Conditions: 150 mM KOAc, 10 mM MgCl2 and 150 mM bicine (pH 8.5), 24 C. This 177-nucleotide RNA was probed chemically with 2A3 and DMS. For 2A3, 1,142 sequencing reads were counted. For DMS the reverse transcriptase was MarathonRT. Source: RMDB library M2PK50, as collected in RNAgym.
[RMDB]
RNA sequence: GGGAACGACUCGAGUAGAGUCGAAAACGCUAUAGAUUCGUCUAUAGCGACUCCUACCGGCCGGCCGGUGCGCGCGGUAGGUGACGCAAACCACCGUGCGAAAUGUACUGGUUUUCGAACCAGUAAAAAGGAACCAUAAGUUCGCUUAUGGUUCCUUAAAAGAAACAACAACAACAAC
Reactivity to 2A3 in 0.01 (KOAc 150mM, MgCl2 10mM, bicine 150mM(pH8.5), 24C), signal-to-noise 1, nucleotides 027 to 126: c010g000c020u010a020u020a000g010a030u000u040c200g000u000c100u010a010u000a010g010c010g010a010c040u010c010c010u000a040c010c000g080g120c040c080g300g130c020c000g020g030u090g040c030g000c030g010c020g010g040u090a300g070g030u020g090a090c200g000c160a100a070a050c000c010a010c000c000g010u010g000c000g000a080a010a040u100g010u000a020c010u000g010g010u010u000u010u010c100g050a000a000c010c000a010g000u030a000a000a030
Reactivity to DMS in 0.01 (KOAc 150mM, MgCl2 10mM, bicine 150mM(pH8.5), 24C), signal-to-noise 2, nucleotides 027 to 126: c010g000c000u000a020u010a000g000a070u010u000c220g050u000c000u000a000u010a010g000c000g000a010c160u000c000c010u000a050c010c030g010g040c110c300g000g030c010c000g030g040u010g020c030g000c010g030c000g000g000u000a090g020g000u000g000a120c180g020c300a060a120a030c000c010a040c000c000g050u000g000c010g000a050a070a050u000g000u020a000c010u000g000g010u000u000u000u030c120g020a000a010c000c000a000g000u000a000a070a100